RNA sequence: GGGAACGACUCGAGUAGAGUCGAAAAAUGUGGUGGAAUUCCGGUGACUUGAUUACACGCUCGCAUUCAUGGUCACUUCCGAAGCGCUUUAGUGCCUUCCGUCCCCAAACCGCCAACAGCCAGGGCGUUUCUUUCGGCUUUUCGAAGCCGAAAGAAAAAAAGAAACAACAACAACAAC
Reactivity to 2A3 in 0.01 (KOAc 150mM, MgCl2 10mM, bicine 150mM(pH8.5), 24C), signal-to-noise 2, nucleotides 027 to 126: a000u090g040u060g020g030u000g000g060a120a110u180u040c060c050g030g000u010g000a000c040u060u010g030a040u140u110a020c020a000c070g050c030u020c020g020c030a070u080u080c010a050u130g050g000u030c010a000c000u100u040c020c040g010a030a000g000c010g050c080u120u120u210a140g050u070g040c000c020u000u000c050c000g020u030c010c010c000c000a030a110a060c030c030g000c020c000a040a040c030a050g020c050c010a020g000g000g020c020g000
Reactivity to DMS in 0.01 (KOAc 150mM, MgCl2 10mM, bicine 150mM(pH8.5), 24C), signal-to-noise 1, nucleotides 027 to 126: a160u010g000u000g020g000u060g000g000a060a040u000u010c060c000g000g010u040g000a000c040u030u000g000a020u030u010a190c130a110c010g000c020u020c040g010c090a050u000u060c080a000u010g000g000u000c000a020c010u030u030c030c060g000a040a060g000c030g050c010u000u120u000a050g000u010g000c070c000u000u020c100c040g010u000c000c000c000c010a040a010a100c130c060g000c000c000a050a120c040a070g000c020c050a080g000g000g000c080g000
The record gives the reactivity of an RNA of 177 nucleotides to 2A3 and DMS. The 2A3 profile rests on 1,221 reads. For 2A3 the reverse transcriptase was SuperScript II with manganese. The reactions ran in a buffer of 150 mM KOAc, 10 mM MgCl2 and 150 mM bicine (pH 8.5), at 24 C. For DMS the reverse transcriptase was MarathonRT.